[RMDB]
RNA sequence: GGGAACGACUCGAGUAGAGUCGAAAAGAAGUCGCAUGCACCCUGCUUACCCGUCUUGCUGUCCUUCAGUGCUGACUGCGGCGGGUACUGGAUGCCCUCACCCUCGGCGCUGAUCUGCGAUGUAGCCCUGAGGUGCUCUAUUCGUAGAGCACCUCAGAAAAGAAACAACAACAACAAC
Reactivity to DMS in 0.01 (KOAc 150mM, MgCl2 10mM, bicine 150mM(pH8.5), 24C), signal-to-noise 1, nucleotides 027 to 126: g020a110a210g040u000c060g000c060a040u050g000c000a060c000c010c020u040g000c090u050u030a080c010c000c000g020u020c000u010u030g040c030u010g010u000c000c000u000u000c300a100g000u040g020c270u010g000a030c050u000g010c020g040g000c060g000g000g040u000a020c010u000g020g000a080u000g000c050c050c010u070c060a100c020c000c030u000c020g040g020c020g000c060u000g010a060u050c040u000g000c040g020a030u030g010u000a100g000c020c070
Reactivity to 2A3 in 0.01 (KOAc 150mM, MgCl2 10mM, bicine 150mM(pH8.5), 24C), signal-to-noise 2, nucleotides 027 to 126: g080a070a040g040u030c010g000c070a020u090g000c020a060c000c000c000u010g040c060u060u040a020c000c000c030g000u030c040u100u250g000c040u070g000u040c010c000u120u130c070a300g300u050g100c150u140g050a030c010u060g020c010g020g000c000g000g000g000u000a000c000u020g030g000a030u100g010c020c010c010u060c030a060c000c020c000u040c030g030g000c020g000c040u050g070a140u040c020u050g060c010g030a050u090g060u150a040g020c000c030